This 207-nucleotide RNA was probed chemically with 2A3.
The reactions ran in a buffer of 150 mM KOAc, 10 mM MgCl2 and 150 mM bicine (pH 8.5), at 24 C.
The 2A3 profile rests on 1,324 reads.
[RMDB]
RNA sequence: GGGAACGACUCGAGUAGAGUCGAAAAACUGCCAUACGUGGCAGAAACACGGCUUACCAGGACUAAACAGCGUGUCUAAAAAACAGUCCUUCAUACCUGAUCUGGAGGGUAGAUCAGGAAUACUAAAAAAAUCGGGUGAAGUUCGCUUCACCCGAAAGAAGAUGAAUCACUUCGGUGAUUCAUCUUCAAAAGAAACAACAACAACAAC
Reactivity to 2A3 in 0.01 (KOAc 150mM, MgCl2 10mM, bicine 150mM(pH8.5), 24C), signal-to-noise 2, nucleotides 027 to 156: a010c000u000g000c000c000a010u020a120c160g060u040g000g000c000a000g030a010a000a000c000a000c000g000g010c010u010u040a040c040c090a020g010g000a010c020u070a090a140a080c110a060g010c030g000u010g030u040c080u100a000a000a050a020a000a000c040a010g020u010c020c010u030u140c080a090u120a130c000c000u010g000a000u010c000u030g020g070a000g090g070g010u080a010g000a020u030c010a000g040g040a010a030u110a060c050u130a000a000a000a010a000a000a210u040c020g010g020g000u000g000a000a000g000u040u150c180g030c090u010u000c000a000c010c000c000g000a000a000a000